Chemical mapping of a 177-nucleotide RNA with DMS and 2A3. Reactivities are given for positions 27 through 126. It was measured as part of the RMDB library M2PK90. In probing experiments dimethyl sulfate is read out at A N1 and C N3, which are open when not base-paired. For 2A3, 2,657 sequencing reads were counted. The reactions ran in a buffer of 150 mM KOAc, 10 mM MgCl2 and 150 mM bicine (pH 8.5), at 24 C. For DMS the reverse transcriptase was MarathonRT. The DMS profile rests on 2,139 reads.
RNA sequence: GGGAACGACUCGAGUAGAGUCGAAAAUUUAAGAGCGUAGAUGUCUCUGUCACGAUACGAGUAAGUGACUCUCGUGUACUACUGACGAAUGAGACAGAGACAUUUAUGCUCAGUCUCAGUCAAGGAACGUACUACGCGAAUUCGUUCGCGUAGUACGAAAAGAAACAACAACAACAAC
Reactivity to DMS in 0.01 (KOAc 150mM, MgCl2 10mM, bicine 150mM(pH8.5), 24C), signal-to-noise 3, nucleotides 027 to 126: u000u020u010a070a090g000a020g030c010g060u000a010g000a020u010g010u010c000u010c000u000g020u010c000a060c100g000a100u010a070c020g020a060g020u000a020a130g000u010g020a050c090u000c200u030c150g000u010g000u010a050c030u000a080c020u010g010a130c070g020a060a030u000g000a060g010a020c000a010g030a010g000a000c010a000u000u000u000a010u000g000c010u000c010a020g000u000c010u000c010a140g010u000c160a110a100g000g010a090a120
Reactivity to 2A3 in 0.01 (KOAc 150mM, MgCl2 10mM, bicine 150mM(pH8.5), 24C), signal-to-noise 3, nucleotides 027 to 126: u130u140u090a190a000g000a000g010c000g000u000a000g010a040u000g010u000c000u000c000u030g010u000c020a020c080g060a010u040a070c010g010a000g020u040a220a090g050u090g260a080c000u000c000u030c100g180u160g030u040a050c040u020a000c000u030g170a110c070g120a150a080u140g040a080g010a090c010a000g000a000g010a000c010a010u000u030u000a010u000g000c000u000c000a000g000u000c000u000c010a060g080u050c050a090a050g150g010a140a020